The record gives the reactivity of an RNA of 177 nucleotides to 2A3.
As a SHAPE reagent, 2A3 marks flexible, mostly unpaired nucleotides at the ribose 2'-OH.
The reactions ran in a buffer of 150 mM KOAc, 10 mM MgCl2 and 150 mM bicine (pH 8.5), at 24 C.
The 2A3 profile rests on 692 reads.
RNA sequence: GGGAACGACUCGAGUAGAGUCGAAAACUUUGCCCAUCCUCCGCCGAUCAUCUGCUGCAAAGAAUUCUUUCUUCGUAAUCUCUCGACGUCGGAGCCAUGCAGAGAAGGACUGCGUCGGUGCGGUGGCUACCAUGGCGGCAUUCGUGCCGCCAUGGUAAAAAGAAACAACAACAACAAC
Reactivity to 2A3 in 0.01 (KOAc 150mM, MgCl2 10mM, bicine 150mM(pH8.5), 24C), signal-to-noise 2, nucleotides 027 to 126: c020u100u020u180g020c030c000c040a000u030c000c020u040c010c000g020c000c000g020a020u040c010a060u020c000u020g020c000u010g000c060a080a080a080g000a210a000u040u010c030u010u050u030c000u110u000c030g120u070a080a120u020c070u010c010u020c100g180a130c080g080u160c060g060g000a010g020c010c010a060u120g000c020a010g020a010g040a090a030g010g040a070c010u040g000c020g110u120c020g000g000u030g000c030g020g020u060g000g020c010